[RMDB]
RNA sequence: GGGAACGACUCGAGUAGAGUCGAAAAAAGUGUCGAAACUUAUCUCAGAUCUUUUUGGUGGCACAGUGGCAACACAGAGCAAGCAACAAUGGGUGAUGGAGUCUGUUGAAGGCAAUCUAAAAGCAUGCCCUCUAAGGGACUUCGGUCCCUUAGAGGGAAAAGAAACAACAACAACAAC
Reactivity to DMS in 0.01 (KOAc 150mM, MgCl2 10mM, bicine 150mM(pH8.5), 24C), signal-to-noise 1, nucleotides 027 to 126: a050a020g050u010g000u040c180g000a160a120a010c030u000u000a050u000c000u000c050a030g000a040u000c000u000u070u000u040u000g000g080u000g000g110c080a110c060a000g130u000g030g000c090a070a130c000a000c000a000g040a050g000c020a170a140g000c090a070a090c080a010a030u070g000g000g100u010g030a090u000g000g000a200g000u000c070u000g000u000u000g030a030a140g000g000c040a040a070u000c050u010a040a010a030a020g000c040a020u000g000
Reactivity to 2A3 in 0.01 (KOAc 150mM, MgCl2 10mM, bicine 150mM(pH8.5), 24C), signal-to-noise 2, nucleotides 027 to 126: a000a000g150u130g000u020c010g030a120a090a000c040u000u100a120u100c050u010c010a200g000a160u110c140u030u040u040u230u050g110g000u060g000g000c000a010c000a060g020u040g060g080c010a030a030c010a040c000a080g020a030g080c040a120a000g040c000a000a030c010a020a150u010g000g080g070u090g030a040u040g020g080a080g040u020c030u110g000u020u190g130a060a000g040g000c060a060a010u050c010u090a020a030a030a030g030c000a030u150g050
Background: The record gives the reactivity of an RNA of 177 nucleotides to DMS and 2A3. It was measured as part of the RMDB library OK1LIB. For 2A3 the reverse transcriptase was SuperScript II with manganese.